[RMDB]
RNA sequence: GGGAACGACUCGAGUAGAGUCGAAAAUCCUAAGUCACCGAGCUCGAUCUUGGAUUUAAUUAGGGAGCCUCGGAAACGAGGCAUCGAUCUAAUUUGUCAGAUCGAGACUCGGUGAUAUGGAAAAAGGACUCAGUGUAGUUCGCUACACUGAGUCCAAGUACUCCUGUAAGUUCGCUUACAGGAGUACAAAAGAAACAACAACAACAAC
Reactivity to 2A3 in 0.01 (KOAc 150mM, MgCl2 10mM, bicine 150mM(pH8.5), 24C), signal-to-noise 2, nucleotides 027 to 156: u000c000c000u040a100a000g000u000c000a020c000c010g020a000g020c000u010c000g000a030u010c030u100u240g090g000a050u190u300u200a020a030u000u000a010g000g030g010a010g000c000c000u000c000g030g000a040a010a010c020g000a010g010g010c050a090u260c010g020a010u020c000u000a000a000u000u000u030g010u010c000a020g000a010u000c000g000a000g010a010c000u000c000g000g000u010g000a000u000a010u000g000g040a000a030a040a060a120g020g000a010c000u010c000a000g020u000g000u030a010g020u050u100c300g010c130u000a000c010a000c020u000g000a000g010u000c000c000a000a000
Record summary
Structure probing data (2A3) for a 207-nucleotide construct. Conditions: 150 mM KOAc, 10 mM MgCl2 and 150 mM bicine (pH 8.5), 24 C.